The data come from the RNA Mapping Database (RMDB), library OK2TRN. An RNA of 177 nucleotides, treated with DMS and 2A3 and read out base by base. For DMS the reverse transcriptase was MarathonRT.
RNA sequence: GGGAACGACUCGAGUAGAGUCGAAAAUCAGCACCUUGGUGCUCUGGGCUGUUAAUACCCUGUAGCAUGCAUUGUGUUUUCAGCCUUUUGAGGCAUUUUCACGUCCAUCAUAGCAUAGGAUUGGGGACUUACUACAAGGGUUCGCCCUUGUAGUAAGAAAAGAAACAACAACAACAAC
Reactivity to DMS in 0.01 (KOAc 150mM, MgCl2 10mM, bicine 150mM(pH8.5), 24C), signal-to-noise 9, nucleotides 027 to 126: u010c120a090g010c020a030c010c020u000u000g010g020u000g000c010u000c020u000g000g010g030c110u000g010u010u010a100a100u010a120c000c010c010u000g010u010a040g010c040a030u000g010c020a020u000u000g010u000g010u000u000u000u010c160a120g010c010c010u000u000u010u010g010a050g010g020c020a140u000u000u000u000c050a100c120g000u000c010c010a050u000c050a120u000a110g020c120a070u000a110g010g000a050u000u000g020g000g010g010a270
Reactivity to 2A3 in 0.01 (KOAc 150mM, MgCl2 10mM, bicine 150mM(pH8.5), 24C), signal-to-noise 9, nucleotides 027 to 126: u090c010a000g000c010a020c010c010u010u030g020g000u010g010c000u000c010u020g000g010g000c040u070g120u300u180a130a040u110a190c010c000c010u020g070u100a020g030c050a030u170g090c000a010u040u020g010u000g020u020u030u060u150c080a030g000c000c000u080u150u090u270g280a070g020g010c030a020u100u040u040u070c090a060c050g030u000c020c010a040u040c020a070u170a090g060c030a040u060a120g010g070a050u030u120g030g000g010g030a010